[RMDB]
RNA sequence: GGGAACGACUCGAGUAGAGUCGAAAAUGUGAUGUGUUCGCACAUCACAAACUACCGAGAAUCUUCCUCGGAAUAAAAGAGGAACCCUUGGAAACAAGGGAAUAAGCCCCUGCUUCGGCAGGGGCAACGUUAGGGAUGCAUUCGUGCAUCCCUAACGAAAAGAAACAACAACAACAAC
Reactivity to 2A3 in 0.01 (KOAc 150mM, MgCl2 10mM, bicine 150mM(pH8.5), 24C), signal-to-noise 1, nucleotides 027 to 126: u060g000u000g010a000u000g000u000g000u090u050c260g040c100a000c000a000u000c010a000c010a000a060a020c010u070a050c010c010g010a040g010a100a110u010c030u000u000c030c000u000c010g030g120a060a100u210a070a060a020a020g000a020g010g020a030a040c030c000c000u000u000g000g010a020a020a040c000a000a000g010g010g000a000a020u030a020a000g010c010c000c000c000u000g010c000u030u040c100g090g000c000a000g000g000g000g000c000a000a000
Reactivity to DMS in 0.01 (KOAc 150mM, MgCl2 10mM, bicine 150mM(pH8.5), 24C), signal-to-noise 2, nucleotides 027 to 126: u000g010u000g020a000u000g020u000g000u000u010c120g000c000a000c000a000u000c020a000c000a000a060a100c110u000a300c000c000g000a090g000a150a080u000c050u000u000c020c000u000c000g030g000a150a130u000a050a030a070a150g010a030g000g010a040a170c000c000c000u000u000g010g000a130a050a260c010a000a010g000g000g000a130a040u000a100a150g000c000c020c010c000u000g000c020u000u010c230g020g050c000a010g030g030g000g020c000a000a010
The record gives the reactivity of an RNA of 177 nucleotides to 2A3 and DMS.
For 2A3, 1,711 sequencing reads were counted.
2A3 adducts were read by reverse transcription with SuperScript II with manganese.